[RMDB]
RNA sequence: GGGAACGACUCGAGUAGAGUCGAAAAGAUAUGGAUCGUGUACGCGAGAGCAACAGCCUGUGUGUCGGAAACGACACCAGGACAUGCUCUCACACGAUCCUAAGUCAAACAGACCUUCGGGUCUGAAGAUUUAACGGCUGUUCGCAGCCGUUAAAUCAAAAGAAACAACAACAACAAC
Reactivity to DMS in 0.01 (KOAc 150mM, MgCl2 10mM, bicine 150mM(pH8.5), 24C), signal-to-noise 2, nucleotides 027 to 126: g000a070u000a300u000g000g000a010u000c000g030u010g000u000a180c300g020c230g000a010g020a030g060c010a060a090c290a180g000c000c010u020g000u000g160u010g020u000c000g000g010a180a110a120c010g020a000c010a000c040c020a000g000g010a000c140a110u000g010c000u000c000u000c010a040c000a000c010g000a000u000c000c000u000a000a050g010u000c010a100a130a290c020a020g000a020c000c000u000u030c190g140g000g060u000c000u010g030a060a200
Reactivity to 2A3 in 0.01 (KOAc 150mM, MgCl2 10mM, bicine 150mM(pH8.5), 24C), signal-to-noise 2, nucleotides 027 to 126: g000a000u090a010u200g000g000a020u000c020g040u010g040u070a090c300g090c200g290a020g000a000g010c020a030a160c050a180g070c000c020u300g090u020g000u000g000u300c010g010g060a010a080a040c010g000a000c010a020c000c010a010g000g000a000c000a040u140g000c000u000c000u000c000a010c000a010c000g000a000u000c000c000u000a010a010g000u000c000a060a080a150c000a020g010a000c010c000u100u240c300g150g000g000u000c020u060g010a060a050